An RNA of 207 nucleotides, treated with DMS and 2A3 and read out base by base. High DMS reactivity at an A or C suggests that its Watson-Crick edge is free.

RNA sequence: GGGAACGACUCGAGUAGAGUCGAAAAUUUUGUUUAACUUGUCCAAAUUCCUACUUACAGAAGAUAAGGAAUCGUUGGAGUUAGUGUCUUCCUUAUGUAGGGGAUUUGAAAUAUCUUAUAAUGACUUAAUAACUUACUUUCCAGAUAGGAAAUACCAACUUUAGGUGUUGUUCGCAACACCUAAAGUAAAAGAAACAACAACAACAAC
Reactivity to DMS in 0.01 (KOAc 150mM, MgCl2 10mM, bicine 150mM(pH8.5), 24C), signal-to-noise 1, nucleotides 027 to 156: u010u020u000u010g010u010u000u010a070a160c030u000u000g000u030c010c020a000a100a080u000u000c000c010u000a070c040u030u010a250c150a100g000a070a050g020a060u010a060a030g000g010a040a040u000c040g030u010u000g020g010a130g030u010u000a000g040u010g000u000c030u000u000c010c030u000u010a060u010g020u000a100g000g010g010g000a090u000u000u000g000a080a040a060u010a060u010c000u020u000a100u010a110a120u000g000a060c040u010u000a060a160u010a060a180c050u010u000a060c120u000u010u000c020c020a150g000a050u000a120g000g000a070a080a100u000a160c040c030a110
Reactivity to 2A3 in 0.01 (KOAc 150mM, MgCl2 10mM, bicine 150mM(pH8.5), 24C), signal-to-noise 1, nucleotides 027 to 156: u030u010u010u060g040u000u060u000a070a080c010u050u090g020u050c010c000a010a010a000u040u000c000c010u010a010c030u080u050a070c080a090g110a060a020g020a040u020a090a060g030g000a020a100u040c270g060u220u210g130g040a030g030u080u040a020g000u040g000u070c010u070u060c000c010u020u030a050u120g050u010a000g000g030g010g000a010u000u030u040g010a030a060a000u120a030u000c030u090u210a010u060a150a070u070g040a020c000u090u030a200a000u110a180a000c010u160u170a070c000u040u000u050c000c020a180g020a300u150a210g070g000a000a000a030u090a060c070c040a040
It was measured as part of the RMDB library OK3TST.